[RMDB]
The record gives the reactivity of an RNA of 207 nucleotides to DMS and 2A3.
Values cover nucleotides 27 to 156.
Conditions: 150 mM KOAc, 10 mM MgCl2 and 150 mM bicine (pH 8.5), 24 C.
The DMS profile rests on 5,029 reads.
Reactivities are rounded to 0.1 and cut off at 0 and 3.
RNA sequence: GGGAACGACUCGAGUAGAGUCGAAAAGUCUUUGCAAACUCCUAAGCCAUUACUCGUUGGUAUAUCGAAGCAGUAGCAAUACCUUUCGUCGUUAAAGUAUUUCCUUUUCAUUAUUCCUCCUCUUCAAGUGCUACAUUCUCGGCCAUUACAACAUCAACUUAAGGUGAGGAUUCGUCCUCACCUUAAGAAAAGAAACAACAACAACAAC
Reactivity to DMS in 0.01 (KOAc 150mM, MgCl2 10mM, bicine 150mM(pH8.5), 24C), signal-to-noise 2, nucleotides 027 to 156: g000u000c020u010u000u010g000c070a140a090a120c030u000c020c010u000a130a260g020c010c010a090u000u000a070c080u000c040g000u000u000g010g000u000a100u000a060u000c060g000a110a120g020c050a080g000u000a060g020c040a050a080u000a050c020c020u000u000u000c070g020u020c050g000u000u000a050a060a130g010u010a070u000u010u000c020c020u000u000u000u000c080a080u000u000a110u000u010c020c010u000c060c030u000c040u000u000c040a060a120g050u000g000c020u000a050c010a080u000u000c020u000c030g030g000c010c010a080u000u010a040c030a070a060c060a100u000c050a080a150
Reactivity to 2A3 in 0.01 (KOAc 150mM, MgCl2 10mM, bicine 150mM(pH8.5), 24C), signal-to-noise 3, nucleotides 027 to 156: g020u000c060u080u100u080g040c030a060a030a080c040u020c030c010u060a050a040g010c000c020a070u040u120a060c030u030c080g050u040u070g010g020u080a110u020a030u210c070g030a040a020g010c030a040g020u070a010g020c030a030a060u050a120c020c010u030u060u060c060g020u010c020g040u060u110a120a040a000g030u030a130u040u050u090c010c000u050u080u050u080c090a120u050u210a090u120u090c010c020u010c020c000u040c000u050u070c040a100a000g030u020g050c010u030a030c030a090u050u040c050u020c020g000g000c000c000a050u050u140a040c030a070a000c000a060u230c020a030a030